[RMDB]
RNA sequence: GGGAACGACUCGAGUAGAGUCGAAAAAUUGUCACUUGGGCCUAGUGAUUACUGUAUUGCACAGCACAGUACCAUUGUGAGGACUUGACUGGUAUAGUGGAAACUAUUAGGAGGUUUGAGAAGAGGAUAAAUCGGCGUAAUUCGUUACGCCGAUUUAAAAAGAAACAACAACAACAAC
Reactivity to DMS in 0.01 (KOAc 150mM, MgCl2 10mM, bicine 150mM(pH8.5), 24C), signal-to-noise 1, nucleotides 027 to 126: a050u010u010g020u020c040a040c040u000u010g000g000g000c070c020u000a070g030u000g010a130u020u010a120c050u000g000u010a120u010u020g070c180a040c070a050g010c050a030c030a070g030u000a030c040c030a060u010u000g000u000g020a050g000g000a060c080u000u000g000a090c040u000g020g010u000a020u000a050g000u000g020g000a030a070a020c070u000a040u000u000a040g020g010a080g000g010u000u010u000g000a040g020a120a120g010a070g020g010a140